Chemical mapping of a 177-nucleotide RNA with 2A3 and DMS.
DMS adducts were read by reverse transcription with MarathonRT.
For 2A3, 16,099 sequencing reads were counted.

RNA sequence: GGGAACGACUCGAGUAGAGUCGAAAAGAUAUGGAUCAGGAUUGACAUGUAGUUCGGAAACGAAUACUACAACAGCAAUACUGAUCCUAAGUCAAAAGCAGACGAUUUGUUCGCAAAUCGUCUGCAACUUAUAAGCUGUGUUCGCACAGCUUAUAAGAAAAGAAACAACAACAACAAC
Reactivity to 2A3 in 0.01 (KOAc 150mM, MgCl2 10mM, bicine 150mM(pH8.5), 24C), signal-to-noise 5, nucleotides 027 to 126: g010a010u050a010u090g010g010a000u010c000a000g020g010a010u000u030g060a180c070a100u080g000u010a000g020u010u010c020g020g000a020a030a010c010g000a030a020u110a220c010u010a010c000a090a060c060a060g130c000a010a010u010a040c000u010g000a000u000c000c000u000a030a000g020u010c020a020a030a060a160g000c000a000g010a010c010g000a000u010u000u030g050u080u160c280g010c200a000a000a000u010c010g000u000c000u000g000c000a000a000
Reactivity to DMS in 0.01 (KOAc 150mM, MgCl2 10mM, bicine 150mM(pH8.5), 24C), signal-to-noise 6, nucleotides 027 to 126: g010a030u000a300u000g000g000a000u000c000a010g000g000a020u000u000g010a090c080a190u000g000u000a010g000u000u000c010g010g000a120a050a140c000g010a030a080u010a090c010u000a000c000a020a100c290a150g000c000a000a000u000a020c000u000g000a010u000c000c000u000a010a060g000u000c040a090a080a130a110g000c000a000g010a010c010g010a020u000u000u000g010u000u000c240g020c000a000a000a000u000c000g000u000c000u000g010c010a010a020

The DMS profile rests on 9,595 reads.